[RMDB]
RNA sequence: GGGAACGACUCGAGUAGAGUCGAAAAGCUAUGGGGAUAGUACGAUCGCAAGAUUGAAACUUGAAGAAAUUGACGGAAGGACACCACCAGGAGUGGAGUGUGCGGCUUAAUUUGACUCAACGCGGGAGCCGAUUGAGAAUUUCGAUUCUCAAUCGGCAAAAGAAACAACAACAACAAC
Reactivity to DMS in 0.01 (KOAc 150mM, MgCl2 10mM, bicine 150mM(pH8.5), 24C), signal-to-noise 1, nucleotides 027 to 126: g020c030u000a080u040g000g020g020g000a070u000a010g000u010a120c020g000a020u000c060g000c290a060a100g020a060u020u010g010a070a080a010c000u000u010g030a170a050g010a030a120a030u000u060g020a020c090g020g000a120a040g000g000a030c060a090c090c030a130c020c070a050g000g020a150g010u000g000g000a060g000u020g000u000g000c000g000g080c060u010u000a010a020u000u040u000g010a100c010u010c030a000a070c030g000c000g000g000g000a130
Reactivity to 2A3 in 0.01 (KOAc 150mM, MgCl2 10mM, bicine 150mM(pH8.5), 24C), signal-to-noise 2, nucleotides 027 to 126: g000c010u000a010u110g050g030g000g020a040u020a080g030u040a110c030g010a060u020c010g000c080a010a110g020a060u000u090g040a120a060a040c000u020u050g040a060a020g050a060a150a170u100u140g020a040c040g020g010a000a040g050g020a000c000a010c010c000a030c020c020a040g010g120a080g130u030g000g000a020g040u090g000u000g040c030g000g030c000u010u090a030a000u090u060u020g000a010c010u000c020a010a000c000g000c010g070g000g000a070